[RMDB]
RNA sequence: GGGAACGACUCGAGUAGAGUCGAAAAAAACGCUGGGACUCUCCCCACCGCUCCGAGUUCUUUUGACGGGAUCCUGAAGCGCGCACGGGAUCCCGAUAAGAACUUGGGAGCGAGGAGUCCUGUGCUGAAGCGCGCACGGCAACCGAAAGGUGCGAAAGACAUUUAUGUUGUUCGCAACAUAAAUGUCAAAAGAAACAACAACAACAAC
Reactivity to 2A3 in 0.01 (KOAc 150mM, MgCl2 10mM, bicine 150mM(pH8.5), 24C), signal-to-noise 1, nucleotides 027 to 156: a020a000a070c020g000c000u000g000g000g000a010c000u040c000u070c100c020c030c000a020c000c000g000c010u010c000c000g000a000g000u010u010c000u110u070u160u220g280a240c250g000g000g000a000u010c000c000u060g050a190a050g000c000g020c000g050c020a020c000g000g010g010a000u020c010c000c000g000a000u010a000a000g000a000a000c000u000u010g260g020g000a000g000c010g000a010g010g000a000g020u000c010c000u000g000u000g010c000u020g040a190a060g030c000g010c010g000c000a000c000g040g060c010a030a040c000c000g090a130a040a030g030g000u010g010c000g010a000a040a030

Source: RMDB library RNAMAK, as collected in RNAgym. An RNA of 207 nucleotides, treated with 2A3 and read out base by base. For 2A3, 1,258 sequencing reads were counted. Reactivities are rounded to 0.1 and cut off at 0 and 3.